[RMDB]
RNA sequence: GGGAACGACUCGAGUAGAGUCGAAAAAAUGUCGAUCGACACGUGCUGAUCUUUCGGACGACCCCGGUUGAAUAACUUGCCCGACCAGAAGGGAUACGCGUCGUGCGCAAGGCUCGACGGCGUCGAGAUGUCGGUAGACGUUCGCGUCUACCGACAUAAAAGAAACAACAACAACAAC
Reactivity to DMS in 0.01 (KOAc 150mM, MgCl2 10mM, bicine 150mM(pH8.5), 24C), signal-to-noise 1, nucleotides 027 to 126: a070a090u010g000u000c030g010a070u000c020g010a070c070a020c080g000u000g030c160u020g000a100u020c020u000u000u010c030g010g000a080c010g010a080c010c100c020c050g000g010u010u000g010a140a060u000a040a090c120u010u010g000c040c010c000g000a040c030c070a130g020a110a140g000g000g040a160u000a080c070g010c060g020u000c000g010u000g000c070g040c100a040a040g010g010c020u000c010g010a050c010g010g020c140g030u010c040g000a190g010
The record gives the reactivity of an RNA of 177 nucleotides to DMS. The data come from the RNA Mapping Database (RMDB), library OK2TST. The RNA was probed in 150 mM KOAc, 10 mM MgCl2 and 150 mM bicine (pH 8.5) at 24 C.